Structure probing data (2A3 and DMS) for a 177-nucleotide construct. It was measured as part of the RMDB library OK2TRN. The DMS profile rests on 3,899 reads. The reactions ran in a buffer of 150 mM KOAc, 10 mM MgCl2 and 150 mM bicine (pH 8.5), at 24 C.

RNA sequence: GGGAACGACUCGAGUAGAGUCGAAAAUUUGUCGACCUUCCAUAUGUAAUUUGAAGUAAUCUAUAAUAACUUUUAACGGCAUGUAUCUUGUUGCAUCUUCAGGUAUUUUAGUUACUUUAAAAUGUAACAUAUGCUAGUACUUCGGUACUAGCAUAUGAAAAGAAACAACAACAACAAC
Reactivity to 2A3 in 0.01 (KOAc 150mM, MgCl2 10mM, bicine 150mM(pH8.5), 24C), signal-to-noise 2, nucleotides 027 to 126: u050u030u130g090u000c040g030a080c000c000u030u030c000c050a070u040a030u150g060u100a120a190u050u010u050g000a030a000g010u020a000a030u100c030u050a030u030a140a050u020a070a130c000u050u160u100u140a090a020c040g070g000c080a010u010g010u120a070u120c130u150u190g150u140u020g020c010a020u000c000u080u100c020a000g000g030u010a040u010u020u000u000a030g010u010u020a000c000u070u000u050a060a040a030a030u110g030u040a100a020
Reactivity to DMS in 0.01 (KOAc 150mM, MgCl2 10mM, bicine 150mM(pH8.5), 24C), signal-to-noise 3, nucleotides 027 to 126: u000u010u010g010u000c060g010a100c070c040u000u000c030c040a110u010a070u010g010u010a090a120u000u000u010g000a020a010g010u000a030a040u020c020u000a020u000a040a020u010a040a050c010u000u000u000u010a080a100c130g000g000c130a020u010g010u010a040u010c150u010u010g020u010u000g000c040a050u000c060u010u000c180a020g010g010u000a000u000u010u000u000a020g000u000u000a010c000u000u000u000a020a010a020a090u010g010u000a060a140